Structure probing data (2A3 and DMS) for a 177-nucleotide construct. Source: RMDB library M2PK50, as collected in RNAgym. High DMS reactivity at an A or C suggests that its Watson-Crick edge is free.
[RMDB]
RNA sequence: GGGAACGACUCGAGUAGAGUCGAAAACGGUCGAAAUUCGUUUCGACCGAAUAUGCUAGCUGAGCACACCUGCAAUGCUAAGCUGAAAGCCAGCUGCAAGCGCGAGUUCGGCGUUCGCGCCGAACAAUUCGUUUUUAGGAUUCGUCCUAAAAACGAAAAAAGAAACAACAACAACAAC
Reactivity to 2A3 in 0.01 (KOAc 150mM, MgCl2 10mM, bicine 150mM(pH8.5), 24C), signal-to-noise 4, nucleotides 027 to 126: c000g010g000u000c000g020a010a020a030u150u090c170g070u030u000u020c000g000a000c000c000g000a010a030u100a020u030g010c040u070a030g000c010u020g050a020g040c010a030c010a090c080c050u040g020c020a080a120u120g040c020u060a080a070g000c000u020g020a100a010a000g030c010c010a000g010c010u040g000c040a080a070g080c050g030c030g130a080g090u000u010c000g010g000c000g040u050u040c170g000c010g000c020c000g000a000a000c000a000a040
Reactivity to DMS in 0.01 (KOAc 150mM, MgCl2 10mM, bicine 150mM(pH8.5), 24C), signal-to-noise 5, nucleotides 027 to 126: c010g030g020u000c000g010a000a010a040u000u010c210g010u000u010u000c000g010a010c010c000g000a030a030u000a070u000g010c020u000a050g020c010u010g000a300g010c020a070c140a130c130c110u010g010c030a080a130u010g000c070u000a070a090g010c020u000g000a060a070a080g010c070c020a060g000c030u000g000c070a040a070g020c120g000c140g000a150g010u000u000c010g010g000c010g010u000u010c190g020c010g030c010c010g010a000a010c000a060a120